An RNA of 207 nucleotides, treated with 2A3 and DMS and read out base by base. DMS adducts were read by reverse transcription with MarathonRT. For DMS, 9,403 sequencing reads were counted.
RNA sequence: GGGAACGACUCGAGUAGAGUCGAAAAGUAUAGAAGCAUGAGACCGCAUGCGUUAUACGAUGAAUCUCGGUCGAAUCCGUUGUGCGAAAGCACUUCGGUAAUGCAUAUCGGUAGGCAGAUCAGCCCGGAUCAGCUACCGUAAUUAGUACGGGCAAGACGAUAAUAUGGUAUUCGUACCAUAUUAUCGAAAAGAAACAACAACAACAAC
Reactivity to 2A3 in 0.01 (KOAc 150mM, MgCl2 10mM, bicine 150mM(pH8.5), 24C), signal-to-noise 3, nucleotides 027 to 156: g060u050a040u050a120g110a190a020g000c000a000u000g010a010g020a130c020c010g040c050a030u070g050c010g010u080u070a070u040a080c090g020a040u120g090a060a130u050c060u020c070g000g010u010c030g010a030a050u030c000c000g000u000u010g000u000g000c010g030a070a010a010g000c000a000c000u010u000c000g010g000u060a050a030u110g030c050a070u080a050u190c000g030g000u010a020g150g200c120a040g010a010u000c010a010g000c000c000c000g010g000a000u010c010a010g010c000u000a000c000c000g010u010a020a030u070u100a030g110u050a050c030g010g000g000c040a020a010g110a030
Reactivity to DMS in 0.01 (KOAc 150mM, MgCl2 10mM, bicine 150mM(pH8.5), 24C), signal-to-noise 4, nucleotides 027 to 156: g010u000a030u000a020g030a110a160g030c010a030u000g010a140g010a120c070c110g020c140a030u000g010c020g010u010u000a050u000a050c040g020a200u000g010a120a140u000c080u000c030g020g000u000c030g030a130a140u000c010c010g020u000u000g030u010g020c000g020a170a120a280g030c000a010c010u000u000c000g020g020u010a040a040u000g010c090a140u000a120u010c010g010g020u000a050g030g020c040a170g030a040u000c010a070g000c050c000c000g020g000a140u000c040a170g000c020u000a020c010c000g020u000a030a060u000u020a110g010u010a090c020g000g020g020c040a150a140g010a240